[RMDB]
RNA sequence: GGGAACGACUCGAGUAGAGUCGAAAACCCCCUCCGGGUUCUCCUCGCAUCGGACUGGCUCAUUCUCGGAGAGGGCGGACGGUCCUGAGAACUCUUAUCUUCCUGCUUAGAAGAGGAGUCUCCUGGAAUAUCAUCAAGUUCGCUUGAUGAAAAAGAAACAACAACAACAAC
Reactivity to 2A3 in 0.01 (KOAc 150mM, MgCl2 10mM, bicine 150mM(pH8.5), 24C), signal-to-noise 9, nucleotides 027 to 129: c000c000c000c000c000u010c000c000g020g000g000u050u020c010u010c010c010u050c050g040c030a130u100c050g030g020a040c020u040g050g010c020u010c040a130u160u020c050u040c050g060g020a080g000a030g050g010g010c020g020g030a040c030g020g020u010c000c010u060g010a030g020a060a020c000u000c010u060u100a130u060c030u040u030c020c030u090g110c060u150u120a050g010a110a010g010a050g020g010a010g010u010c010u000c030c010u020g020g070a070a040u130a050
Reactivity to DMS in 0.01 (KOAc 150mM, MgCl2 10mM, bicine 150mM(pH8.5), 24C), signal-to-noise 9, nucleotides 027 to 129: c010c020c000c000c020u000c020c010g000g000g000u000u000c020u000c030c040u030c100g040c140a110u040c060g030g020a090c050u040g010g010c060u000c040a110u050u030c030u020c050g000g000a050g000a080g020g000g010c060g000g000a060c030g020g010u000c020c020u010g000a060g020a070a080c030u000c020u030u030a130u020c000u030u020c030c070u060g040c160u030u020a070g040a030a040g010a030g000g000a050g000u010c040u000c000c040u000g000g000a100a060u070a120